[RMDB]
RNA sequence: GGGAACGACUCGAGUAGAGUCGAAAACCGUAGGCAUUGAACUACAAGUCAACGUGACUUUGAUCAGAGCUUCGAAAGAGGCUCUGGGAGUCACCGACGCUUGCAAUGCCUAAACGGAAAAGUUGACGAGCAAGGGUUCGCCCUUGCUCGUCAACAAGUUAAUAGACUGGUUCGCCAGUCUAUUAACAAAAGAAACAACAACAACAAC
Reactivity to 2A3 in 0.01 (KOAc 150mM, MgCl2 10mM, bicine 150mM(pH8.5), 24C), signal-to-noise 2, nucleotides 027 to 156: c000c000g020u020a000g000g000c000a000u000u030g030a140a110c070u140a060c300a040a020g010u080c080a100a010c030g000u000g020a000c010u080u040u110g140a140u180c000a010g000a000g010c010u010u000c010g060a080a080a060g010a000g000g000c000u000c000u000g000g010g000a000g000u000c000a000c000c000g020a020c070g000c000u000u010g020c000a000a010u010g000c000c000u000a000a010a010c020g050g010a000a100a090a100g000u010u000g000a000c000g000a000g020c000a010a010g050g000g020u100u190c190g100c000c000c000u000u000g000c000u000c000g000u010c010a000a000c000a000a010
Reactivity to DMS in 0.01 (KOAc 150mM, MgCl2 10mM, bicine 150mM(pH8.5), 24C), signal-to-noise 1, nucleotides 027 to 156: c010c000g020u010a010g010g010c010a030u000u000g010a100a250c050u000a140c000a060a050g010u000c020a050a250c100g020u000g000a040c020u000u000u000g010a140u000c010a020g000a020g010c000u000u000c020g010a110a140a270g000a020g040g000c010u010c000u000g000g000g000a010g020u000c020a000c000c000g010a300c160g000c000u040u000g020c010a030a090u000g000c010c000u000a000a020a070c020g030g010a110a060a100a080g000u000u010g020a060c000g010a080g010c030a070a080g030g010g080u000u020c300g020c000c000c000u000u000g020c000u010c050g020u000c000a010a010c010a040a080